[RMDB]
RNA sequence: GGGAACGACUCGAGUAGAGUCGAAAAAAAGCAUUUUGUAUUAUUGGGACAGGAUACUACAAAAGCCCUAAAAUAGAUAGUGUCAAUGGGAAUGAAAACAAGAGAGUAGAUUCAAGGGAGAAUGAAAUGUAGACAGGCCUUCAGGAAUGAUGAAGACGGUAAGAAGACAGUUCGCUGUCUUCUUACCAAAAGAAACAACAACAACAAC
Reactivity to DMS in 0.01 (KOAc 150mM, MgCl2 10mM, bicine 150mM(pH8.5), 24C), signal-to-noise 1, nucleotides 027 to 156: a060a030a110g010c050a140u000u000u010u000g000u010a050u000u000a130u000u000g050g000g010a160c060a040g000g010a050u000a040c040u010a090c010a020a010a040a040g030c030c030c010u000a050a060a050a080u000a130g020a110u000a050g030u010g000u000c020a080a030u010g040g010g040a030a070u010g010a050a050a100a060c060a040a080g010a080g000a050g010u000a060g020a110u000u000c060a070a070g010g020g010a070g010a050a060u010g000a040a030a030u000g020u020a060g010a100c030a060g030g000c010c010u000u010c020a030g020g010a080a080u010g020a080u010g010a030a030g020a030c130
Reactivity to 2A3 in 0.01 (KOAc 150mM, MgCl2 10mM, bicine 150mM(pH8.5), 24C), signal-to-noise 2, nucleotides 027 to 156: a000a000a020g030c010a040u000u040u030u100g040u030a020u030u030a050u070u080g030g020g030a010c000a020g060g000a030u030a070c030u020a050c050a030a050a030a030g000c020c000c000u050a060a070a020a010u070a020g080a060u040a040g050u040g000u060c030a030a040u040g000g000g000a020a070u060g000a040a060a010a070c060a060a010g050a000g000a020g040u050a030g030a060u060u080c010a040a020g030g000g050a040g010a050a000u080g020a060a020a010u080g010u010a010g000a040c020a010g000g050c000c000u010u040c030a020g020g040a120a060u130g030a050u060g010a020a030g100a010c080